This 207-nucleotide RNA was probed chemically with DMS and 2A3. Values are in units of 0.01, from 0 to 300, in steps of 10. Values cover nucleotides 27 to 156. The data come from the RNA Mapping Database (RMDB), library M2RFPK. For 2A3 the reverse transcriptase was SuperScript II with manganese. The DMS profile rests on 3,519 reads.
RNA sequence: GGGAACGACUCGAGUAGAGUCGAAAAUAACACUGGCGGCUGCGUAUCACUCUAGGGUACGUGAUAGUGCGAUAAAAGAAGCACUGGUACAUGCCGGCAGGGACAGUUAAGAGAUGGCCGCAGUCUCAAAAGGGGUCAUUCUUCGGAAUGACCCCAACUCUUGUAGUAUCUUCGGAUACUACAAGAGAAAAGAAACAACAACAACAAC
Reactivity to DMS in 0.01 (KOAc 150mM, MgCl2 10mM, bicine 150mM(pH8.5), 24C), signal-to-noise 2, nucleotides 027 to 156: u000a050a160c060a050c000u000g040g040c000g040g020c010u000g000c010g010u000a040u000c020a120c100u020c080u000a180g050g030g020u000a020c030g020u000g010a190u010a030g030u010g000c000g010a150u010a050a100a150a090g000a150a300g000c000a030c010u020g040g030u010a110c070a090u000g010c000c000g000g030c010a070g030g010g000a110c080a090g000u000u000a070a150g010a060g000a070u000g000g000c070c070g000c040a180g010u000c020u000c020a020a070a130a200g000g030g010g000u000c000a020u010u000c000u000u000c300g020g000a020a020u000g020a010c010c000c000c000a000a000
Reactivity to 2A3 in 0.01 (KOAc 150mM, MgCl2 10mM, bicine 150mM(pH8.5), 24C), signal-to-noise 2, nucleotides 027 to 156: u080a070a030c070a020c070u090g190g030c000g010g010c000u040g000c010g010u000a030u000c060a110c170u090c180u220a170g030g000g090u010a000c010g000u010g020a060u080a100g000u010g000c010g030a030u190a250a190a030a000g140a110a020g000c010a010c010u000g020g020u150a080c030a050u170g000c020c000g030g020c010a010g050g000g000a020c040a070g010u030u040a150a000g020a000g010a020u030g050g060c010c010g070c080a020g000u000c000u020c020a030a050a020a010g000g010g000g000u000c000a010u010u000c000u020u010c120g060g000a000a000u000g000a010c000c000c000c000a000a000